[RMDB]
RNA sequence: GGGAACGACUCGAGUAGAGUCGAAAAGUACUGAGGAAAAGCCUCUUUGGAAUGGCUGAGGCCUGCUCCCACAUCUUCUGUGUGAAGUUGAGGGCCCUUGGGCUGGUUCCAUUCAGGGUAUGAGGUGCGACUAUGACAUGUUCGCAUGUCAUAGUCGAAAAGAAACAACAACAACAAC
Reactivity to DMS in 0.01 (KOAc 150mM, MgCl2 10mM, bicine 150mM(pH8.5), 24C), signal-to-noise 2, nucleotides 027 to 126: g000u000a070c050u000g000a140g020g000a090a100a100a230g010c010c010u000c030u000u000u010g010g000a060a010u000g000g010c190u010g000a230g000g020c020c010u000g010c200u000c000c010c000a110c040a020u000c040u010u000c050u010g020u010g030u000g010a030a020g020u000u000g000a110g020g000g000c130c060c050u010u010g020g010g010c000u000g020g010u010u000c000c000a030u000u000c040a100g010g020g010u000a050u000g000a060g000g030u000g010
Reactivity to 2A3 in 0.01 (KOAc 150mM, MgCl2 10mM, bicine 150mM(pH8.5), 24C), signal-to-noise 2, nucleotides 027 to 126: g060u040a090c050u080g070a150g000g140a070a140a010a010g060c010c000u030c000u080u080u100g050g030a020a010u020g020g000c050u040g030a070g010g000c010c000u010g040c030u030c020c020c000a000c000a020u000c030u120u000c000u020g270u010g080u130g150a030a030g010u040u040g070a040g000g000g030c040c020c070u020u090g080g020g000c000u010g120g000u090u000c010c000a000u000u020c010a030g140g120g060u160a060u160g030a010g000g030u060g040
Annotation
The data come from the RNA Mapping Database (RMDB), library OK2TST. This 177-nucleotide RNA was probed chemically with DMS and 2A3. The DMS profile rests on 4,409 reads. High 2A3 reactivity points to a flexible backbone, as in loops and unpaired stretches.